[RMDB]
RNA sequence: GGGAACGACUCGAGUAGAGUCGAAAAAGCCGUCACUUACGAGUGACGGCAACAUGGAGUCACAUCAUCUCAUGUUAGCGCUCUACUCGUAGGGCGCUAUUUUUAGCGUGCAGUACGCUGCACGCAAGAUGUGUCAAUUCUUCGGAAUUGACACAUCAAAAGAAACAACAACAACAAC
Reactivity to 2A3 in 0.01 (KOAc 150mM, MgCl2 10mM, bicine 150mM(pH8.5), 24C), signal-to-noise 7, nucleotides 027 to 126: a000g000c000c000g000u010c000a000c000u040u070a030c250g120a020g000u000g000a000c000g000g010c000a000a000c010a010u020g070g010a020g060u140c100a060c020a230u140c020a110u020c070u020c040a030u040g020u050u030a010g000c000g010c010u000c010u020a060c030u050c150g100u060a000g000g010g000c000g000c010u010a010u010u020u010u020u080a020g000c000g000u000g010c010a000g000u030a020c250g020c100u000g010c000a010c000g000c000a000a010
Reactivity to DMS in 0.01 (KOAc 150mM, MgCl2 10mM, bicine 150mM(pH8.5), 24C), signal-to-noise 3, nucleotides 027 to 126: a060g010c010c000g000u020c000a020c000u000u010a120c220g000a040g020u000g000a010c010g000g040c000a000a010c080a050u010g000g000a050g000u010c190a080c170a090u010c100a100u010c030u000c040a090u000g000u000u010a000g000c000g000c020u000c000u000a010c080u010c300g030u000a010g010g000g000c000g000c000u000a000u000u020u030u000u020a140g000c000g010u030g000c000a000g020u010a070c280g030c000u000g010c010a010c010g000c020a010a020

An RNA of 177 nucleotides, treated with 2A3 and DMS and read out base by base.
Values cover nucleotides 27 to 126.
The RNA was probed in 150 mM KOAc, 10 mM MgCl2 and 150 mM bicine (pH 8.5) at 24 C.
DMS adducts were read by reverse transcription with MarathonRT.
It was measured as part of the RMDB libraries RFM100 and RFMREP.